[RMDB]
RNA sequence: GGGAACGACUCGAGUAGAGUCGAAAACAGGUGGGCCUCAAUGCCUCGUUCCUCAAGGAAGGCCUCUUCCUGGGGCUUCGCUUCGGCCGCAUGGACCUCACUUUGCUCGCCGAGGGUAUGGGGGACGUGAUUAAGCACUCUUCGGAGUGCUUAAUCAAAAAGAAACAACAACAACAAC
Reactivity to DMS in 0.01 (KOAc 150mM, MgCl2 10mM, bicine 150mM(pH8.5), 24C), signal-to-noise 3, nucleotides 027 to 126: c080a050g000g020u000g010g010g030c020c070u000c140a080a080u010g000c020c020u000c010g000u000u010c000c010u000c040a050a170g000g010a070a020g020g010c040c070u000c020u010u000c170c180u010g010g000g000g010c060u000u000c030g000c020u000u000c010g020g010c010c220g000c020a020u010g010g000a170c130c130u010c120a110c030u000u000u000g020c000u000c160g010c010c000g010a020g010g000g000u000a080u000g000g000g000g010g000a050c050g010
Reactivity to 2A3 in 0.01 (KOAc 150mM, MgCl2 10mM, bicine 150mM(pH8.5), 24C), signal-to-noise 2, nucleotides 027 to 126: c020a010g070g060u040g010g030g030c040c040u150c170a070a100u230g000c010c000u030c020g000u010u000c000c010u010c000a000a040g130g040a040a050g130g100c050c020u040c030u170u090c020c110u110g000g040g000g000c000u040u050c030g020c010u010u020c030g010g020c000c030g030c000a000u040g020g070a100c000c040u130c020a070c030u040u030u040g020c020u050c060g010c010c000g010a010g000g030g050u150a130u150g000g000g000g000g020a000c000g060

Chemical mapping of a 177-nucleotide RNA with DMS and 2A3. The DMS profile rests on 3,567 reads.